Source: RMDB library OK3TST, as collected in RNAgym. The record gives the reactivity of an RNA of 207 nucleotides to 2A3. Reactivities are rounded to 0.1 and cut off at 0 and 3. Values cover nucleotides 27 to 156.
RNA sequence: GGGAACGACUCGAGUAGAGUCGAAAACGAUCCUCGAGAGAGGAUCGACGAGUCUUCGGACUCGAUUACCGCGAAGAUGUGCCGCGGGGCUACGAUGGUAUUGUGGGAAAGAAUACCAUUGUACCUUCUUGUCGUAGCCGAACAACUUGCACGUCCACAGGGCGGUACGAUUCGUCGUACCGCCCUGAAAAGAAACAACAACAACAAC
Reactivity to 2A3 in 0.01 (KOAc 150mM, MgCl2 10mM, bicine 150mM(pH8.5), 24C), signal-to-noise 1, nucleotides 027 to 156: c000g000a000u000c000c000u020c000g030a080g000a000g000a000g000g000a000u000c000g000a000c000g000a000g000u030c000u060u030c140g120g020a000c000u000c000g000a080u210u260a070c000c000g030c020g000a060a100g000a000u000g000u000g000c000c000g000c010g030g050g000g000c000u000a000c010g000a000u040g000g000u000a000u040u000g000u040g020g030g060a050a300a000g180a110a020u040a090c000c000a000u030u020g010u000a020c000c020u150u250c080u120u300g020u020c010g000u000a000g000c000c010g000a040a050c080a000a060c010u060u020g000c000a000c030g030u000c000c000a070